[RMDB]
RNA sequence: GGGAACGACUCGAGUAGAGUCGAAAAUAUCCUGCGUUCGCGCAGGAUACAGCACAAAACUCGGAGGGCGCGCACUCGGAGACAAAAGAAAAAGCGAAGCAAGUGAGCUUAGAUUCGUCUAAGCUAAGUUGCUAAAUGAUUUCGAUCAUUUAGCAACAAAAGAAACAACAACAACAAC
Reactivity to DMS in 0.01 (KOAc 150mM, MgCl2 10mM, bicine 150mM(pH8.5), 24C), signal-to-noise 1, nucleotides 027 to 126: u000a020u000c000c000u000g010c000g020u000u010c180g030c010g020c000a000g000g000a000u000a000c060a120g000c100a080c100a100a070a110a160c040u000c040g010g020a040g010g000g010c030g010c070g010c020a090c040u000c040g010g000a040g030a080c160a040a040a050a090g010a040a040a040a080a210g000c020g010a050a070g010c090a100a090g000u000g010a040g010c000u000u000a000g000a030u000u000c210g010u000c000u000a000a020g000c000u000a010a070
Reactivity to 2A3 in 0.01 (KOAc 150mM, MgCl2 10mM, bicine 150mM(pH8.5), 24C), signal-to-noise 4, nucleotides 027 to 126: u040a010u010c000c000u000g010c000g020u010u060c250g000c000g000c100a000g000g000a000u000a000c010a010g060c040a020c040a100a160a180a050c030u010c030g060g010a010g020g040g000c030g000c000g000c030a080c040u010c010g030g010a030g020a030c060a010a100a020a050g220a040a080a030a010a000g050c030g060a110a000g030c040a080a040g100u140g140a000g010c000u000u000a000g000a030u020u030c160g020u000c100u000a000a000g000c000u040a050a040